This 177-nucleotide RNA was probed chemically with 2A3 and DMS. High DMS reactivity at an A or C suggests that its Watson-Crick edge is free. The 2A3 profile rests on 2,051 reads. Conditions: 150 mM KOAc, 10 mM MgCl2 and 150 mM bicine (pH 8.5), 24 C. Reactivities are given for positions 27 through 126. 2A3 adducts were read by reverse transcription with SuperScript II with manganese.
RNA sequence: GGGAACGACUCGAGUAGAGUCGAAAAACAUGUUGUGACCAUGAUUCUUUCUGGCCCUUUCACUAAUGAAAGGAAAGAAUGCAUGCUCAUUGACUUUCUCAAGAAUUCUAGUCUGGGACCGCCAAAGUGCUCUAGAUUCAUUCGUGAAUCUAGAGCAAAAAGAAACAACAACAACAAC
Reactivity to 2A3 in 0.01 (KOAc 150mM, MgCl2 10mM, bicine 150mM(pH8.5), 24C), signal-to-noise 4, nucleotides 027 to 126: a000c050a020u090g000u000u010g050u020g030a010c010c010a020u000g010a010u020u050c010u050u010u030c100u140g210g040c000c010c040u030u040u040c140a130c130u210a170a220u210g010a010a020a010g020g000a010a030a000g040a030a010u140g110c030a020u030g010c000u000c010a000u050u220g000a010c010u000u030u010c000u000c010a040a020g180a050a080u210u100c070u080a060g060u030c020u020g000g000g090a090c020c020g020c060c000a090a090a130g040
Reactivity to DMS in 0.01 (KOAc 150mM, MgCl2 10mM, bicine 150mM(pH8.5), 24C), signal-to-noise 4, nucleotides 027 to 126: a060c150a060u020g000u010u020g010u000g000a030c150c030a010u000g000a110u010u010c000u000u000u000c040u020g010g000c180c040c010u000u000u000c020a090c300u030a120a120u070g000a020a090a030g010g000a030a050a000g000a010a010u010g030c000a010u000g020c280u000c030a030u000u030g020a020c020u000u000u000c020u000c000a110a090g010a080a160u020u020c050u010a050g000u000c000u000g010g000g000a060c080c030g020c060c020a050a080a080g020